[RMDB]
RNA sequence: GGGAACGACUCGAGUAGAGUCGAAAAAUGAGGCGGACCAAUACUUUUCACAUGAUGAUCCAAGCAGUAGUGAUCAAUCCAGGUCCGGAUGGUUCGAGAACAAGGAAAUCUCAGAUAUUGAAGUGCACACCCAUUUCUGAUUCGUCAGAAAUGGGUGAAAAGAAACAACAACAACAAC
Reactivity to DMS in 0.01 (KOAc 150mM, MgCl2 10mM, bicine 150mM(pH8.5), 24C), signal-to-noise 4, nucleotides 027 to 126: a110u010g020a090g000g020c040g010g010a030c010c010a050a120u010a120c090u030u000u020u010c040a080c140a090u010g010a040u000g010a080u010c030c080a100a110g040c090a060g000u040a060g010u050g020a010u000c040a030a090u010c070c110a060g000g000u030c020c030g000g010a030u020g000g030u010u020c070g000a050g020a030a100c120a040a130g010g010a050a050a080u010c000u000c020a100g000a080u020a070u000u000g020a030a090g000u000g000c080a200
Reactivity to 2A3 in 0.01 (KOAc 150mM, MgCl2 10mM, bicine 150mM(pH8.5), 24C), signal-to-noise 4, nucleotides 027 to 126: a010u180g000a030g010g100c000g000g000a000c000c000a020a000u130a210c100u090u180u150u160c070a110c070a150u130g040a030u060g010a030u060c040c030a090a020g050c050a050g070u300a000g020u090g110a020u020c010a030a050u050c080c030a010g040g000u010c000c000g000g000a050u040g010g030u090u060c030g020a020g020a210a080c150a130a110g090g070a120a090a050u030c020u020c020a020g170a110u110a070u150u240g080a240a030g140u090g050c010a030